[RMDB]
RNA sequence: GGGAACGACUCGAGUAGAGUCGAAAAUAGCCGGUGUCAUUAUGCGUGAUGCGAUCAAAUAUGAUUGCACUAUGUAUAUCUUGUGUAAUUAUUUAAUAUUACGUUUGUGACAGACCGGCCGCGGCUACGCGACUAGUGAGUUCGCUCACUAGUCGCGAAAAGAAACAACAACAACAAC
Reactivity to 2A3 in 0.01 (KOAc 150mM, MgCl2 10mM, bicine 150mM(pH8.5), 24C), signal-to-noise 1, nucleotides 027 to 126: u080a000g000c020c000g000g070u000g020u020c000a000u010u300a030u210g010c010g000u020g000a010u030g040c080g060a100u100c090a020a080a030u130a030u060g020a000u000u000g050c000a000c020u110a080u120g090u050a200u000a070u300c030u030u050g000u030g000u000a000a020u000u000a030u000u040u030a250a200u160a040u070u020a020c000g000u040u050u130g010u050g000a000c000a020g130a020c000c010g000g060c020c020g030c000g000g030c000u020a020
Reactivity to DMS in 0.01 (KOAc 150mM, MgCl2 10mM, bicine 150mM(pH8.5), 24C), signal-to-noise 1, nucleotides 027 to 126: u000a120g030c010c000g000g000u000g020u000c000a040u000u010a000u000g010c010g010u000g000a030u000g000c100g000a060u010c080a120a150a160u010a100u010g020a040u010u000g000c000a010c000u000a000u010g020u000a070u020a080u010c100u000u000g000u000g000u000a000a010u000u000a060u040u000u000a090a090u010a030u010u000a010c010g030u020u000u010g020u000g000a020c020a110g000a260c000c010g000g000c010c030g010c050g010g000c120u000a090
Conditions: 150 mM KOAc, 10 mM MgCl2 and 150 mM bicine (pH 8.5), 24 C. An RNA of 177 nucleotides, treated with 2A3 and DMS and read out base by base. High DMS reactivity at an A or C suggests that its Watson-Crick edge is free. Source: RMDB library OK2TST, as collected in RNAgym. The DMS profile rests on 1,158 reads. For DMS the reverse transcriptase was MarathonRT.